[RMDB]
RNA sequence: GGGAACGACUCGAGUAGAGUCGAAAAACUGAGAUAUGGACUACAGAUGCUAUUAGUCUGCGAAUUCAUAUGACUUUGAACGUACGAAUAUCACGGCCUGAAGACCAUAAGCUUUAUUAGCGAACCAUGAAGUUAGACUAUUCGUAGUCUAACUUCAAAAAGAAACAACAACAACAAC
Reactivity to 2A3 in 0.01 (KOAc 150mM, MgCl2 10mM, bicine 150mM(pH8.5), 24C), signal-to-noise 3, nucleotides 027 to 126: a000c040u040g020a030g010a020u030a010u020g000g000a000c000u030a010c010a010g020a080u050g010c020u050a030u170u060a090g040u000c010u010g000c030g040a030a140u010u010c010a010u060a020u180g110a080c090u020u040u060g010a100a010c010g000u030a020c090g020a020a010u030a010u120c050a020c060g010g020c000c000u020g010a020a000g000a010c000c000a010u020a040a030g000c000u090u040u060a130u060u060a060g030c020g010a020a020c000c000a030
Reactivity to DMS in 0.01 (KOAc 150mM, MgCl2 10mM, bicine 150mM(pH8.5), 24C), signal-to-noise 5, nucleotides 027 to 126: a080c060u010g000a040g000a080u000a020u000g000g010a130c050u000a100c020a010g010a110u010g020c110u000a090u000u000a120g000u000c020u000g010c020g000a070a120u000u000c010a020u000a020u000g020a090c150u000u010u000g000a080a050c040g030u000a040c100g010a030a030u000a060u000c090a050c080g010g010c040c020u000g010a060a040g000a130c010c020a040u000a040a110g000c030u000u000u000a070u020u010a040g000c030g010a070a110c050c070a120
The record gives the reactivity of an RNA of 177 nucleotides to 2A3 and DMS. DMS adducts were read by reverse transcription with MarathonRT. The RNA was probed in 150 mM KOAc, 10 mM MgCl2 and 150 mM bicine (pH 8.5) at 24 C. Values cover nucleotides 27 to 126.